Source: RMDB library TTRDES, as collected in RNAgym. Structure probing data (2A3 and DMS) for a 177-nucleotide construct. For 2A3, 2,131 sequencing reads were counted. For 2A3 the reverse transcriptase was SuperScript II with manganese.
[RMDB]
RNA sequence: GGGAACGACUCGAGUAGAGUCGAAAAGAUAUGGAGCAGCGGUCAGAGCAACAGCAUGCCCUCGGAAACGAGGGUCAUGACAUGCUCUACGCUGCUCCUAAGUCAAAGUACCAGUUCGCUGGUACAACACGGCUAACAUGUUCGCAUGUUAGCCGUGAAAAGAAACAACAACAACAAC
Reactivity to 2A3 in 0.01 (KOAc 150mM, MgCl2 10mM, bicine 150mM(pH8.5), 24C), signal-to-noise 1, nucleotides 027 to 126: g040a070u080a050u150g020g010a030g000c000a000g060c000g080g170u300c210a020g000a010g030c010a010a130c030a100g030c070a010u000g040c010c010c000u000c000g010g060a030a040a080c010g000a010g000g040g010u070c000a000u020g000a020c050a000u090g000c010u000c000u010a000c000g000c020u000g000c000u000c000c000u000a000a010g010u010c010a010a000a000g010u000a010c010c000a000g020u040u120c300g040c110u000g000g010u010a020c000a000a000
Reactivity to DMS in 0.01 (KOAc 150mM, MgCl2 10mM, bicine 150mM(pH8.5), 24C), signal-to-noise 1, nucleotides 027 to 126: g000a000u010a300u010g010g010a000g040c050a000g030c010g010g020u020c290a000g020a000g000c010a000a030c250a240g020c000a010u010g000c000c000c020u000c010g040g000a070a090a170c000g000a010g000g000g030u020c020a000u000g010a050c120a250u000g000c000u000c000u000a020c000g000c000u000g010c000u000c000c000u010a020a050g000u000c020a110a100a190g000u010a050c000c020a000g030u010u030c300g020c000u000g000g000u000a010c000a060a210